[RMDB]
RNA sequence: GGGAACGACUCGAGUAGAGUCGAAAAGUAUCCAUGUUCGCAUGGAUACGAAAUAUGCGCGCGUAUAUCCGGAUGGCUGGAUGCGCGCGUCUGGCUGGCCGGUGGUGCUAGUCUUCGGACUAGCAAAGUCUAAACUGGGUUUCGACCCAGUUUAGACAAAAGAAACAACAACAACAAC
Reactivity to DMS in 0.01 (KOAc 150mM, MgCl2 10mM, bicine 150mM(pH8.5), 24C), signal-to-noise 2, nucleotides 027 to 126: g010u010a010u000c000c000a010u000g000u000u010c200g040c000a000u000g010g000a030u000a010c000g010a060a070a080u010a080u010g010c000g020c010g030c030g040u000a060u000a120u000c010c000g020g000a240u000g030g000c010u010g010g000a020u000g000c000g000c030g000c000g000u010c050u000g010g020c050u000g010g000c020c040g010g010u010g020g010u000g000c010u000a020g000u000c010u000u010c220g010g000a010c000u010a010g010c010a020a050a090
Reactivity to 2A3 in 0.01 (KOAc 150mM, MgCl2 10mM, bicine 150mM(pH8.5), 24C), signal-to-noise 2, nucleotides 027 to 126: g000u020a010u000c000c010a000u020g000u020u060c230g000c070a010u000g000g000a010u000a000c000g000a000a020a010u290a100u130g000c020g010c000g010c020g050u020a090u000a030u260c010c010g040g050a120u260g280g220c040u020g010g000a010u010g010c020g010c000g010c000g000u000c010u000g050g020c000u020g000g020c010c040g060g050u080g020g030u080g000c000u000a010g000u010c000u000u010c140g050g000a000c000u000a000g020c000a000a040a000
This 177-nucleotide RNA was probed chemically with DMS and 2A3. For DMS, 2,942 sequencing reads were counted. Source: RMDB library M2PK50, as collected in RNAgym. The RNA was probed in 150 mM KOAc, 10 mM MgCl2 and 150 mM bicine (pH 8.5) at 24 C. The 2A3 profile rests on 2,521 reads. Values cover nucleotides 27 to 126. For 2A3 the reverse transcriptase was SuperScript II with manganese.